[RMDB]
RNA sequence: GGGAACGACUCGAGUAGAGUCGAAAAGAAAAGACGAUGUUAUUAUGAUUCUCGAGUAAUAGCAGGUCACGCGUACUACUCGCCGAACGGAAGGCAGACUGUUCGCGCAAUGAAACGAGGAAGAAAACGAUAGGGAUAGUUUCGACUAUCCCUAUCGAAAAGAAACAACAACAACAAC
Reactivity to 2A3 in 0.01 (KOAc 150mM, MgCl2 10mM, bicine 150mM(pH8.5), 24C), signal-to-noise 7, nucleotides 027 to 126: g080a010a100a010a010g030a010c100g060a180u010g010u020u000a030u010u020a020u050g100a160u120u050c070u040c070g060a030g020u030a010a010u010a010g000c020a010g030g060u060c020a020c080g030c010g030u020a030c010u010a020c000u030c050g010c000c000g020a110a070c060g060g070a080a040g090g000c010a030g120a150c030u020g010u030u020c010g000c000g000c070a050a160u170g100a050a040a040c040g010a020g060g030a070a030g070a070a140a000a020
Reactivity to DMS in 0.01 (KOAc 150mM, MgCl2 10mM, bicine 150mM(pH8.5), 24C), signal-to-noise 5, nucleotides 027 to 126: g030a080a070a120a090g000a070c040g000a090u000g010u000u010a020u000u000a010u000g000a090u000u020c050u000c080g010a250g000u000a010a020u020a000g000c020a040g000g010u000c070a150c070g000c040g060u000a060c050u010a050c110u010c080g000c280c030g000a030a020c100g010g000a080a050g000g000c090a080g000a110c060u010g000u010u000c000g020c110g000c170a070a050u030g010a080a070a080c110g010a060g010g000a070a090g010a060a040a050a150